[RMDB]
RNA sequence: GGGAACGACUCGAGUAGAGUCGAAAAGAGUCACACUUCGGUGUGACUCAAAUAAGCUGACCAGCUAUGAGGUCUUCAUCGUCAUGCACAAAUAGAAUAAAAAAACCCUAAUCUUCGGAUUAGGGAACUAGAACACUAACUUCGGUUAGUGUUCUAGAAAAGAAACAACAACAACAAC
Reactivity to DMS in 0.01 (KOAc 150mM, MgCl2 10mM, bicine 150mM(pH8.5), 24C), signal-to-noise 1, nucleotides 027 to 126: g010a010g010u010c000a000c010a000c000u020u010c110g000g010u000g010u000g000a010c000u000c010a020a030a060u010a080a120g000c040u020g020a150c030c050a120g000c040u000a020u010g010a070g000g010u020c010u000u000c080a040u000c080g040u010c050a080u000g000c020a050c120a050a050a140u010a080g000a080a040u060a010a000a080a120a080a040a100c000c000c000u000a000a010u000c000u000u000c230g000g000a020u000u010a010g000g000g020a000a000
Reactivity to 2A3 in 0.01 (KOAc 150mM, MgCl2 10mM, bicine 150mM(pH8.5), 24C), signal-to-noise 2, nucleotides 027 to 126: g000a000g000u020c000a000c020a010c010u070u160c190g030g020u010g010u000g000a000c010u010c010a000a000a000u020a010a000g020c010u000g050a030c030c020a000g050c020u100a060u100g080a030g010g000u000c000u060u060c060a090u020c020g070u010c030a050u080g030c020a010c020a020a070a040u180a110g140a100a040u250a230a090a020a010a050a080a060c000c000c000u000a010a000u030c010u020u020c250g060g000a000u010u000a000g000g010g010a000a000